[RMDB]
RNA sequence: GGGAACGACUCGAGUAGAGUCGAAAAGAUAUGGACAUGAACUACUUAAUGAUGUGCAUCGAUCUCGGAAACGAGGGAGCACUACCAUUAAGCAUGUCCUAAGUCAAAACAUGGGUUCGCCCAUGAACAAGGAAAGCAACUUCGGUUGCUUUCCUUGAAAAGAAACAACAACAACAAC
Reactivity to DMS in 0.01 (KOAc 150mM, MgCl2 10mM, bicine 150mM(pH8.5), 24C), signal-to-noise 1, nucleotides 027 to 126: g010a030u000a300u010g000g000a000c000a000u000g010a060a020c080u000a300c020u000u020a020a010u000g000a050u020g000u020g010c000a300u000c140g000a110u000c010u000c000g000g030a130a040a250c000g000a000g020g000g000a000g000c000a000c000u040a050c080c000a000u000u000a000a000g000c000a030u000g040u000c000c000u030a040a240g000u000c150a120a090a090a110c000a020u000g000g000g000u000u070c250g030c000c010c000a010u000g000a070a130
Reactivity to 2A3 in 0.01 (KOAc 150mM, MgCl2 10mM, bicine 150mM(pH8.5), 24C), signal-to-noise 1, nucleotides 027 to 126: g030a010u060a030u170g000g010a010c030a030u010g030a090a120c050u160a020c010u300u050a020a000u020g000a000u040g000u000g020c030a210u240c130g110a130u050c030u010c030g050g000a040a000a050c010g010a000g010g000g000a020g030c000a000c040u050a090c030c000a010u010u010a000a000g000c000a000u010g000u000c000c000u000a040a020g010u010c050a050a000a060a130c010a000u010g000g010g000u090u130c250g180c030c010c000a000u010g010a010a030
Chemical mapping of a 177-nucleotide RNA with DMS and 2A3.
For 2A3, 1,379 sequencing reads were counted.
Source: RMDB library TTRDEL, as collected in RNAgym.
The RNA was probed in 150 mM KOAc, 10 mM MgCl2 and 150 mM bicine (pH 8.5) at 24 C.